[RMDB]
RNA sequence: GGGAACGACUCGAGUAGAGUCGAAAAGGAGCUCGAGUUGUUCUUAGCUCAACUAAGGGCAACUGUAUGUUCUUAAGCUGUUUAAGGGCAUAUAGUAGUGUGUAGUUGAGCUACACAUUAUUAAUAGGUUAUAAACAGCUUAUGGCCUGUUCGAGCACCAUUCGUGAAUGUUCGCAUUCACGAGUGGAAAAGAAACAACAACAACAAC
Reactivity to 2A3 in 0.01 (KOAc 150mM, MgCl2 10mM, bicine 150mM(pH8.5), 24C), signal-to-noise 5, nucleotides 027 to 156: g120g010a050g010c000u000c000g000a000g010u000u010g000u010u000c000u000u000a000g000c000u000c020a010a030c010u030a040a070g140g130g030c040a050a000c010u020g010u020a030u030g010u030u020c000u000u010a010a010g020c040u020g040u080u020u000a010a010g030g000g000c020a000u000a000u000a020g050u050a140g090u030g070u070g060u140a020g000u010u080g020a000g010c000u000a000c000a000c000a030u120u240a070u100u110a130a080u060a080g000g000u000u020a010u010a030a030a010c020a010g020c010u010u010a000u020g010g000c000c010u020g040u060u080c100g030a020g030c050a030
The data come from the RNA Mapping Database (RMDB), library OK3TST. Structure probing data (2A3) for a 207-nucleotide construct. 2A3 adducts were read by reverse transcription with SuperScript II with manganese. The reactions ran in a buffer of 150 mM KOAc, 10 mM MgCl2 and 150 mM bicine (pH 8.5), at 24 C.